Chemical mapping of a 177-nucleotide RNA with DMS and 2A3.
It was measured as part of the RMDB library OK1LIB.
The RNA was probed in 150 mM KOAc, 10 mM MgCl2 and 150 mM bicine (pH 8.5) at 24 C.
RNA sequence: GGGAACGACUCGAGUAGAGUCGAAAAUUUUGAAGAGAAAAGCACUUCAAAAAAAAUUGGAUACUUAUGUGAGCGCUUUUCCAUAUAUACAUGCAUAAAUUCAUAAGAUAUUUGGCAUGUGCACAUGCGAUAGGUAGUCCUUCGGGACUACCUAUCGAAAAGAAACAACAACAACAAC
Reactivity to DMS in 0.01 (KOAc 150mM, MgCl2 10mM, bicine 150mM(pH8.5), 24C), signal-to-noise 2, nucleotides 027 to 126: u040u000u000u000g000a080a000g010a210g000a040a070a050a060g030c080a080c030u010u010c010a010a000a000a050a140a030a140a180u000u040g000g000a140u010a030c040u000u000a030u040g020u000g000a120g010c070g020c040u000u000u000u000c000c070a090u030a080u040a100u020a010c000a000u000g050c010a060u010a050a000a020u010u030c030a150u050a210a100g000a020u050a030u010u000u010g000g000c000a000u000g010u010g020c150a040c060a030u010g020
Reactivity to 2A3 in 0.01 (KOAc 150mM, MgCl2 10mM, bicine 150mM(pH8.5), 24C), signal-to-noise 4, nucleotides 027 to 126: u080u060u040u040g070a080a030g060a060g050a010a120a100a000g040c020a050c040u000u000c000a010a000a000a020a000a010a010a150u110u110g100g020a100u080a210c040u120u060a110u150g130u090g040a040g020c020g010c040u020u020u020u020c000c010a000u050a000u030a000u010a100c000a010u010g010c010a040u130a170a040a020u060u090c020a020u100a300a200g070a100u150a070u100u060u020g020g010c000a000u000g010u030g020c060a010c000a120u160g060